[RMDB]
RNA sequence: GGGAACGACUCGAGUAGAGUCGAAAAUCACGACGGACAGGUCGAAAAUCAAGUGAAUCGCCGUAACGGAGCGUGUUCGUCCGCGACGUCACGGUUAAAUCAAAUGACAGAACUAAACAUGUAGAACUGGUCGUGGACCGCUUCUGGACGCGGGUUCGCCGUAGUAUCUCUUCGGAGAUACUACGGCAAAAGAAACAACAACAACAAC
Reactivity to 2A3 in 0.01 (KOAc 150mM, MgCl2 10mM, bicine 150mM(pH8.5), 24C), signal-to-noise 2, nucleotides 027 to 156: u120c010a000c030g000a000c070g140g050a060c080a010g070g030u060c020g030a070a000a000a050u080c070a170a060g000u040g120a140a030u120c090g000c000c000g000u000a090a000c040g020g000a000g000c000g000u120g070u170u070c080g010u070c000c000g020c020g020a000c000g010u010c020a010c040g000g000u040u040a090a050a000u060c040a000a070a050u070g020a040c070a170g000a060a010c000u150a200a060a060c010a040u120g120u110a010g010a070a020c050u040g100g020u010c010g000u000g020g010a000c000c010g020c020u240u170c070u170g100g000a030c060g000c040g000g000g050u060u060c070